[RMDB]
RNA sequence: GGGAACGACUCGAGUAGAGUCGAAAAGGGCCGGCAUCGCCCCAAUCGGCGCGCCCGACGGUGACGGGUUCGUAUCCGCUCCGGGGCACGGACGCUGCGAGGUGAUCUGCUUUUCGGCCGAUCACACCGGUCCGACGCAUUUCGAUGCGUCGGACCGAAAAGAAACAACAACAACAAC
Reactivity to 2A3 in 0.01 (KOAc 150mM, MgCl2 10mM, bicine 150mM(pH8.5), 24C), signal-to-noise 1, nucleotides 027 to 126: g090g030g000c040c000g000g030c060a130u020c000g020c000c000c000c000a020a120u070c010g000g000c000g000c040g000c000c000c020g060a130c030g160g050u160g000a190c080g070g000g070u210u200c090g010u270a110u050c000c000g000c000u000c000c000g040g000g000g020c040a000c000g030g040a070c000g010c060u130g000c000g050a000g060g000u000g000a030u030c000u210g080c010u220u210u000u180c000g000g000c010c000g000a080u040c000a000c050a050c020